[RMDB]
RNA sequence: GGGAACGACUCGAGUAGAGUCGAAAAUCUCCUUCGGGAGAGCAUCCUCCUAAGUCUGCUGGAGUGUGGCUGUCGCUAUGAAGGUGGUCGGAAACGACCACUGGAGCGACAUCCACACGAUGAAAGCAGAUAUGGACAACCCUUCCUUCGGGAAGAAAUGAGAAUAGUCUUUCGAGACUAUUCUCAUAAAAGAAACAACAACAACAAC
Reactivity to 2A3 in 0.01 (KOAc 150mM, MgCl2 10mM, bicine 150mM(pH8.5), 24C), signal-to-noise 4, nucleotides 027 to 156: u000c000u020c000c000u020u150c300g100g010g000a010g000a000g030c020a100u040c000c010u020c010c000u070a130a050g030u000c000u000g010c010u000g030g040a040g000u010g000u000g010g000c000u000g000u000c000g000c000u090a210u300g050a030a010g000g010u010g000g000u000c000g010g030a080a090a060c010g010a000c000c000a000c000u000g000g010a000g000c010g000a000c000a000u000c010c000a000c010a000c000g000a010u030g030a010a010a000g000c000a000g010a000u010a010u020g000g000a020c060a060a120c070c020c000u000u010c000c000u060u110c230g090g000g000a000a000g020a030a110
Reactivity to DMS in 0.01 (KOAc 150mM, MgCl2 10mM, bicine 150mM(pH8.5), 24C), signal-to-noise 2, nucleotides 027 to 156: u000c010u010c000c020u000u000c290g010g050g020a040g000a030g010c050a140u000c090c040u000c030c030u000a090a260g000u000c010u000g010c030u000g000g000a120g030u000g060u000g010g030c070u000g030u000c010g020c000u010a090u000g030a180a300g010g000u000g010g000u010c000g000g010a120a120a230c030g000a020c000c000a010c020u000g000g000a020g010c010g010a040c000a000u000c000c010a040c030a020c000g010a100u010g000a110a140a050g020c000a010g020a010u000a120u020g000g020a080c100a160a140c040c040c010u000u000c010c000u000u010c230g050g000g000a060a060g000a040a140
The record gives the reactivity of an RNA of 207 nucleotides to 2A3 and DMS. The DMS profile rests on 4,345 reads. The RNA was probed in 150 mM KOAc, 10 mM MgCl2 and 150 mM bicine (pH 8.5) at 24 C. Values cover nucleotides 27 to 156.